RNA sequence: GGGAACGACUCGAGUAGAGUCGAAAAGAUAUGGAUCGAGACCAGGGAGCAGUACGUCGGAAACGACGUAUACUGCGAGGAUCUGGCUCGAUCCUAAGUCAAAGUAGCAGCGUUCGCGCUGCUACAAGAAUUACAGUACGUUCGCGUACUGUAAUUCAAAAGAAACAACAACAACAAC
Reactivity to 2A3 in 0.01 (KOAc 150mM, MgCl2 10mM, bicine 150mM(pH8.5), 24C), signal-to-noise 5, nucleotides 027 to 126: g020a000u060a020u130g010g000a010u010c020g020a010g280a300c010c010a020g030g020g030a250g010c010a010g020u010a000c000g010u010c010g010g010a030a040a030c010g000a000c000g000u020a060u040a010c000u000g000c020g000a060g020g020a100u020c010u010g000g000c000u000c000g000a000u010c000c000u010a010a000g000u010c050a110a050a130g010u000a000g000c000a000g000c000g040u100u150c300g030c000g020c140u010g000c000u010a000c000a000a010
Reactivity to DMS in 0.01 (KOAc 150mM, MgCl2 10mM, bicine 150mM(pH8.5), 24C), signal-to-noise 6, nucleotides 027 to 126: g000a040u000a300u000g010g000a000u000c000g000a010g000a210c000c000a010g000g020g020a090g020c000a010g010u000a010c000g010u000c000g020g000a080a080a180c010g010a010c010g000u000a040u010a050c010u000g000c000g000a120g020g000a060u010c000u000g000g010c000u000c000g000a000u000c000c000u000a010a070g010u000c040a120a150a170g010u000a010g010c000a010g000c000g020u000u020c290g030c020g020c000u000g000c000u000a000c010a050a070

Source: RMDB library TTRDES, as collected in RNAgym.
An RNA of 177 nucleotides, treated with 2A3 and DMS and read out base by base.